[RMDB]
RNA sequence: GGGAACGACUCGAGUAGAGUCGAAAAUGUAUCACGCUCUAGUACUGGCUAUGAACUCUCGAUCUGAAGAGGAGGGAAGAGAUGCACUGAAGUGGAACCCUGACAUCCUAUCUGCCAAGACUUUGUCAGUCUCCUUAUGAUUCGUCAUAAGGAGACUAAAAGAAACAACAACAACAAC
Reactivity to DMS in 0.01 (KOAc 150mM, MgCl2 10mM, bicine 150mM(pH8.5), 24C), signal-to-noise 7, nucleotides 027 to 126: u030g010u020a040u020c050a080c120g010c030u010c020u020a100g010u020a050c040u010g010g000c040u010a070u040g040a110a110c050u010c000u010c050g010a090u020c080u020g010a160a070g010a100g000g000a060g010g000g010a110a040g010a050g010a110u010g020c050a070c080u000g020a070a090g030u000g000g000a090a060c010c010c010u000g010a110c080a050u000c030c020u000a060u010c050u000g010c030c040a070a080g010a090c030u000u000u020g000u030c160
Reactivity to 2A3 in 0.01 (KOAc 150mM, MgCl2 10mM, bicine 150mM(pH8.5), 24C), signal-to-noise 9, nucleotides 027 to 126: u150g030u060a080u080c050a000c080g040c010u040c030u060a060g030u050a080c050u040g060g000c010u030a040u210g080a110a050c010u020c000u000c050g100a220u030c060u150g070a120a050g020a070g090g030a040g030g040g020a100a040g040a020g010a040u090g010c030a040c060u070g050a100a020g050u040g030g030a040a050c000c000c000u020g020a020c000a020u010c010c010u070a070u040c020u030g020c020c010a060a020g030a080c040u070u080u090g070u070c030

Description
Structure probing data (DMS and 2A3) for a 177-nucleotide construct. 2A3 is a SHAPE reagent: it acylates the 2'-hydroxyl of flexible nucleotides of all four kinds. It was measured as part of the RMDB library OK1LIB. For 2A3, 10,024 sequencing reads were counted. For DMS the reverse transcriptase was MarathonRT. The reactions ran in a buffer of 150 mM KOAc, 10 mM MgCl2 and 150 mM bicine (pH 8.5), at 24 C.